The record gives the reactivity of an RNA of 177 nucleotides to 2A3. For 2A3 the reverse transcriptase was SuperScript II with manganese. As a SHAPE reagent, 2A3 marks flexible, mostly unpaired nucleotides at the ribose 2'-OH. Values cover nucleotides 27 to 126. Conditions: 150 mM KOAc, 10 mM MgCl2 and 150 mM bicine (pH 8.5), 24 C.
RNA sequence: GGGAACGACUCGAGUAGAGUCGAAAAUAUCAUUUAAAAAAUAAAGUUUUGCUUUUUAUAAUGCUGAUAAGAGAUUUCAAAGGAAUCAAGAGCUAUUCUCUUUAAAGCUUCCAAAUCAUUAUCAUCAGGUCAUAGGUAAUUUCGAUUACCUAUGACCAAAAGAAACAACAACAACAAC
Reactivity to 2A3 in 0.01 (KOAc 150mM, MgCl2 10mM, bicine 150mM(pH8.5), 24C), signal-to-noise 1, nucleotides 027 to 126: u100a010u050c020a070u020u280u300a090a120a020a220a000a160u300a130a200a050g000u000u000u110u040g040c000u300u030u000u000u000a070u050a260a100u180g000c000u000g000a000u000a020a020g130a000g000a040u010u000u050c270a200a090a020g000g040a000a000u150c040a020a010g010a000g000c010u040a240u270u140c000u030c000u000u090u180a130a130a000g000c000u040u000c000c000a040a040a040u000c040a000u000u000a000u000c020a000u000c020a000